[RMDB]
The record gives the reactivity of an RNA of 177 nucleotides to DMS and 2A3.
Conditions: 150 mM KOAc, 10 mM MgCl2 and 150 mM bicine (pH 8.5), 24 C.

RNA sequence: GGGAACGACUCGAGUAGAGUCGAAAAGGUAUCAGUGUUGGUACGGUACAAGUAACCAUUUUUACAAUAAAGACCACCAACAGAUUUACCAUCGCUUGGUUGGUCAGAAGGCCAUUGAGUCUUUGACUCCCGUUCCUAAGUUCGCUUAGGAACGGGAAAAAGAAACAACAACAACAAC
Reactivity to DMS in 0.01 (KOAc 150mM, MgCl2 10mM, bicine 150mM(pH8.5), 24C), signal-to-noise 2, nucleotides 027 to 126: g020g030u000a010u000c090a080g000u000g020u020u010g010g010u000a050c150g000g010u000a020c100a050a110g000u010a080a100c130c090a070u000u000u030u030u040a030c050a090a040u000a130a060a190g010a020c000c000a020c000c000a000a240c080a140g000a090u010u000u040a100c240c150a160u000c040g000c300u010u000g010g000u000u010g010g000u000c010a010g000a000a050g010g020c050c040a160u000u010g010a080g040u010c010u000u000u000g000a170c080
Reactivity to 2A3 in 0.01 (KOAc 150mM, MgCl2 10mM, bicine 150mM(pH8.5), 24C), signal-to-noise 1, nucleotides 027 to 126: g100g000u030a060u080c130a160g050u030g070u220u070g000g050u090a080c080g000g000u030a050c000a010a170g020u000a120a020c000c000a010u110u000u000u150u040a120c080a150a140u180a260a150a020g040a010c050c000a000c050c000a000a000c000a040g000a090u210u120u030a070c000c000a000u040c040g030c250u050u020g040g100u040u180g030g000u000c050a050g040a070a040g020g000c000c030a160u100u180g040a010g020u030c040u020u070u080g030a050c000